[RMDB]
RNA sequence: GGGAACGACUCGAGUAGAGUCGAAAAAGAUCAUUAUCUUUUUGGAUGAACUUGAUGAUCCAAAUGUGAGAAUCAUUUUAGAAUGCAGAAUUUAAAUUACAACAUUGUGUUUUGCUCCCUGUUCGUGCUUCAUAAAUCACUUCGGUGAUUUAUGAAGAAAAGAAACAACAACAACAAC
Reactivity to DMS in 0.01 (KOAc 150mM, MgCl2 10mM, bicine 150mM(pH8.5), 24C), signal-to-noise 2, nucleotides 027 to 126: a050g000a030u000c210a140u010u010a220u000c010u000u000u000u000u000g010g000a050u010g010a230a050c050u010u000g000a070u000g020a080u000c020c080a030a040a040u000g000u000g010a120g000a220a210u020c040a020u000u000u010u000a100g010a030a050u000g010c020a020g000a040a030u000u000u000a040a040a040u000u010a070c140a060a060c080a060u000u000g010u010g010u000u000u000u000g010c070u000c000c010c010u000g000u000u000c040g020u000g010
Reactivity to 2A3 in 0.01 (KOAc 150mM, MgCl2 10mM, bicine 150mM(pH8.5), 24C), signal-to-noise 2, nucleotides 027 to 126: a030g000a010u070c060a030u070u300a040u070c060u000u080u010u030u030g120g000a050u040g010a120a060c020u050u120g000a020u070g020a040u080c020c010a010a050a060u040g030u010g000a040g040a040a060u100c000a000u020u030u040u150a080g030a170a040u080g000c010a000g010a030a010u020u090u160a150a170a000u250u160a060c030a040a010c010a110u060u090g020u010g000u070u020u010u050g010c000u030c030c010c010u020g040u040u010c020g040u070g110